Background
An RNA of 177 nucleotides, treated with 2A3 and DMS and read out base by base. For DMS, 1,361 sequencing reads were counted. Source: RMDB library M2PK50, as collected in RNAgym.
RNA sequence: GGGAACGACUCGAGUAGAGUCGAAAACAGAAUCACUUCGGUGAUUCUGAAAGAAUGAAGAAAACGCGCGACGACGAGCGCGAAAUAAAUAAAUCGUCGUAAAAAUCGAGUCCUUCGGGACUCGAAACACUGUCCAAUAGUUCGCUAUUGGACAGUGAAAAGAAACAACAACAACAAC
Reactivity to 2A3 in 0.01 (KOAc 150mM, MgCl2 10mM, bicine 150mM(pH8.5), 24C), signal-to-noise 2, nucleotides 027 to 126: c000a000g000a010a020u010c000a010c010u030u140c180g110g000u000g000a000u000u000c000u000g000a010a010a000g060a030a120u290g040a080a120g080a090a150a030a020c000g010c000g010c000g030a020c000g000a000c000g000a000g010c010g020c000g000a010a010a030u050a010a030a000u120a010a050a020u010c000g010u000c000g000u000a000a070a000a000a020u010c000g010a020g010u000c000c000u050u120c190g060g000g000a000c000u000c000g000a000a000a000
Reactivity to DMS in 0.01 (KOAc 150mM, MgCl2 10mM, bicine 150mM(pH8.5), 24C), signal-to-noise 2, nucleotides 027 to 126: c000a000g010a010a040u000c000a000c000u000u000c300g000g020u010g000a010u000u000c000u000g000a030a090a110g010a130a110u000g010a130a090g000a080a080a040a230c010g000c010g000c000g000a030c000g000a020c010g010a030g000c000g010c000g010a050a050a040u010a030a030a060u000a040a020a080u000c000g020u000c000g010u020a060a090a050a090a060u010c000g000a000g010u010c000c000u010u010c240g020g020g010a000c000u000c000g000a000a040a070